[RMDB]
RNA sequence: GGGAACGACUCGAGUAGAGUCGAAAAAGCAGCCUGCGCCCCUCAGAUUACCUCCGCGCCCCAUCGCCACCGGGGGCCCGUCACUGGGCGACGUGAUGUACGGAGUUCCCAUGGAUGCGGCCGUCAGCGGAGACUAACUAUUCGUAGUUAGUCUCCGAAAAGAAACAACAACAACAAC
Reactivity to 2A3 in 0.01 (KOAc 150mM, MgCl2 10mM, bicine 150mM(pH8.5), 24C), signal-to-noise 2, nucleotides 027 to 126: a000g020c020a000g050c000c030u040g020c010g040c020c020c020c000u030c040a100g010a120u000u220a100c010c010u020c030c000g010c010g000c030c000c010c000a040u080c040g030c020c020a030c050c030g000g000g020g000g020c030c000c010g030u010c000a040c130u050g030g030g050c010g030a030c010g030u030g030a220u130g060u130a020c030g010g010a120g050u040u060c000c020c000a010u060g020g020a020u020g020c050g030g080c050c020g260u050c040a020g060
Reactivity to DMS in 0.01 (KOAc 150mM, MgCl2 10mM, bicine 150mM(pH8.5), 24C), signal-to-noise 3, nucleotides 027 to 126: a060g000c060a080g000c020c010u000g000c100g020c040c030c010c030u000c100a070g010a130u000u010a110c060c020u000c030c040g020c070g000c010c010c020c050a080u000c080g020c040c020a100c080c060g000g010g010g020g020c000c040c030g020u000c050a060c080u010g000g010g010c070g000a070c040g030u000g030a120u010g000u010a050c030g020g010a200g000u010u000c000c000c000a070u010g010g000a060u000g010c110g000g010c000c000g000u000c050a110g000